This 177-nucleotide RNA was probed chemically with 2A3 and DMS.
For 2A3, 5,200 sequencing reads were counted.
[RMDB]
RNA sequence: GGGAACGACUCGAGUAGAGUCGAAAAUAAUUUACUUUUCAGCAUCAGAUAUGUCUCUGAUUGAGCAUGAUUCUUAUUAUGUAAGUAUCAAUUCAGUUCAAUUACUGUAUAUGGCGGGUCCAAAGGAAAUUAGAGCUAAUUUCGAUUAGCUCUAAUUAAAAGAAACAACAACAACAAC
Reactivity to 2A3 in 0.01 (KOAc 150mM, MgCl2 10mM, bicine 150mM(pH8.5), 24C), signal-to-noise 4, nucleotides 027 to 126: u060a000a080u090u090u150a140c020u090u070u050u080c030a000g020c010a030u020c000a020g060a160u070a050u160g130u030c010u010c010u070g080a140u050u050g000a000g010c020a030u030g010a020u070u000c010u040u040a030u090u090a130u300g030u020a020a030g000u010a020u060c010a020a060u160u100c020a040g010u030u030c020a030a010u080u030a050c050u040g050u070a040u010a040u180g070g020c050g040g000g030u030c010c020a090a050a050g080g030a060
Reactivity to DMS in 0.01 (KOAc 150mM, MgCl2 10mM, bicine 150mM(pH8.5), 24C), signal-to-noise 7, nucleotides 027 to 126: u010a090a080u010u000u010a080c060u000u000u000u000c050a120g020c060a080u000c090a100g010a090u010a030u010g000u010c030u000c060u000g000a040u000u000g000a040g010c020a140u000g000a030u000u000c010u000u000a020u000u010a110u030g010u000a010a030g000u000a030u000c020a050a130u010u010c170a090g010u000u000c020a030a030u000u000a030c060u000g000u000a040u000a050u010g000g020c030g010g010g010u000c030c040a040a060a110g010g010a060
For DMS, 10,241 sequencing reads were counted. For 2A3 the reverse transcriptase was SuperScript II with manganese.